Structure probing data (DMS) for a 177-nucleotide construct.
For DMS the reverse transcriptase was MarathonRT.
For DMS, 996 sequencing reads were counted.
The RNA was probed in 150 mM KOAc, 10 mM MgCl2 and 150 mM bicine (pH 8.5) at 24 C.
RNA sequence: GGGAACGACUCGAGUAGAGUCGAAAAUUAUCCCGGGGAUCGGCCUCCGCUCCUCCAUGGUGGAUCCAGGUCCCCCGAAAGGAGGGGGGUGGGCCUUGGACCUCCGGGAGCCAUGGGAUCCGUGGAGCGAAGUAACGUAGUUCGCUACGUUACUUCGAAAAGAAACAACAACAACAAC
Reactivity to DMS in 0.01 (KOAc 150mM, MgCl2 10mM, bicine 150mM(pH8.5), 24C), signal-to-noise 1, nucleotides 027 to 126: u010u000a110u000c000c000c000g000g020g010g030a050u000c030g010g030c000c000u020c260c000g000c030u010c000c000u000c000c000a100u000g000g030u000g030g010a030u000c030c190a300g000g020u000c000c000c030c000c010g000a040a100a200g020g000a030g000g030g010g000g010g100u010g020g000g010c000c020u000u020g010g000a050c000c010u000c000c000g010g000g000a030g020c010c030a060u000g000g010g030a070u000c000c020g060u000g020g000a250g000